[RMDB]
RNA sequence: GGGAACGACUCGAGUAGAGUCGAAAAAGUUACGCUCAGCUGUGAUGGGUGACAAUCAGUGCAUUACUGUUUUAUCAGUCUUCCCCUUAGAGACUGACGCAGACGAGCAGGAACAGAGCGCCGAAGAGCCAACAAGGGCAUUCGUGCCCUUGUUGGCAAAAGAAACAACAACAACAAC
Reactivity to 2A3 in 0.01 (KOAc 150mM, MgCl2 10mM, bicine 150mM(pH8.5), 24C), signal-to-noise 2, nucleotides 027 to 126: a000g080u080u050a020c030g000c000u000c030a070g000c000u070g080u030g010a250u120g050g020g020u210g070a080c090a000a110u120c040a040g040u020g080c040a130u050u110a110c000u060g030u050u160u000u060a030u000c010a040g000u010c000u040u140c000c000c000c000u000u150a010g000a000g000a080c000u050g000a030c000g000c020a000g020a200c130g070a000g010c140a020g000g010a000a000c000a080g020a000g090c070g000c070c020g000a100a010g120a010